Conditions: 150 mM KOAc, 10 mM MgCl2 and 150 mM bicine (pH 8.5), 24 C. Chemical mapping of a 177-nucleotide RNA with DMS and 2A3. High 2A3 reactivity points to a flexible backbone, as in loops and unpaired stretches. Reactivities are given for positions 27 through 126. Source: RMDB library TTRDES, as collected in RNAgym.

[RMDB]
RNA sequence: GGGAACGACUCGAGUAGAGUCGAAAAGAUAUGGAUUAUGUGUAGACAUGAAGGAUAAGUGUCGGAAACGACACGUAACUUCAACAGCUACACCGCUAAUCCUAAGUCAAACGGAUCUUCGGAUCCGCCAAUGGAGUAAGUUCGCUUACUCCAUUGGAAAAGAAACAACAACAACAAC
Reactivity to DMS in 0.01 (KOAc 150mM, MgCl2 10mM, bicine 150mM(pH8.5), 24C), signal-to-noise 8, nucleotides 027 to 126: g020a040u010a300u000g020g000a000u000u000a010u010g000u000g010u000a000g010a060c100a300u000g010a010a000g010g020a150u000a080a270g010u000g000u000c000g000g010a110a100a220c000g010a010c000a000c000g010u000a080a220c000u000u000c000a030a080c300a190g000c000u000a000c000a010c000c000g000c010u000a000a010u000c000c010u000a050a140g010u000c060a050a110a300c020g000g000a010u000c000u000u010c210g020g000a000u000c000c000g000
Reactivity to 2A3 in 0.01 (KOAc 150mM, MgCl2 10mM, bicine 150mM(pH8.5), 24C), signal-to-noise 6, nucleotides 027 to 126: g050a020u100a050u210g000g010a000u010u010a050u220g010u010g000u010a010g030a090c090a180u100g000a000a010g040g000a010u020a040a020g000u010g000u010c000g000g000a060a100a020c010g000a000c000a000c010g000u010a020a010c000u010u000c010a040a030c050a020g030c000u000a010c000a010c000c010g000c000u010a000a010u000c000c000u030a170a050g080u050c040a070a060a120c030g000g000a000u000c000u070u100c300g180g000a010u000c010c000g000